[RMDB]
RNA sequence: GGGAACGACUCGAGUAGAGUCGAAAAACUUAGAGUCUGGUCUAGCAGUCUUUCAAACUUUGGAGAGCUAUGUGUAAUGUUAAAAUUCGCUAUGGUGAAUGAUUCUAAGGGAAUAAGAACUUACAAAUCAUGUGAUAGAUUUCGAUCUAUCACAUGAAAAAGAAACAACAACAACAAC
Reactivity to 2A3 in 0.01 (KOAc 150mM, MgCl2 10mM, bicine 150mM(pH8.5), 24C), signal-to-noise 4, nucleotides 027 to 126: a000c010u010u010a010g000a000g020u010c030u080g050g020u020c010u050a030g000c040a050g060u010c010u020u170u100c050a190a220a190c120u180u150u160g050g010a020g000a000g020c030u060a080u130g100u030g050u130a060a040u030g040u030u110a090a080a060a050u060u020c000g040c020u030a020u170g030g000u020g110a160a100u100g000a010u000u000c000u000a010a020g040g010g010a020a040u130a110a010g090a060a030c020u020u070a040c120a030a090a070
Reactivity to DMS in 0.01 (KOAc 150mM, MgCl2 10mM, bicine 150mM(pH8.5), 24C), signal-to-noise 5, nucleotides 027 to 126: a150c010u000u000a020g010a030g010u000c010u000g010g010u000c020u000a040g020c070a080g020u010c030u010u010u010c090a100a120a110c150u010u010u010g000g010a040g010a100g000c030u010a050u010g000u000g010u010a030a040u000g010u020u010a070a070a090a050u000u000c050g010c000u000a050u010g020g010u000g010a110a080u010g000a030u000u010c010u000a030a030g010g000g000a060a060u010a070a090g010a090a070c070u000u000a060c160a060a090a160

The record gives the reactivity of an RNA of 177 nucleotides to 2A3 and DMS.
For 2A3, 3,881 sequencing reads were counted.
2A3 adducts were read by reverse transcription with SuperScript II with manganese.
Reactivities are given for positions 27 through 126.
The reactions ran in a buffer of 150 mM KOAc, 10 mM MgCl2 and 150 mM bicine (pH 8.5), at 24 C.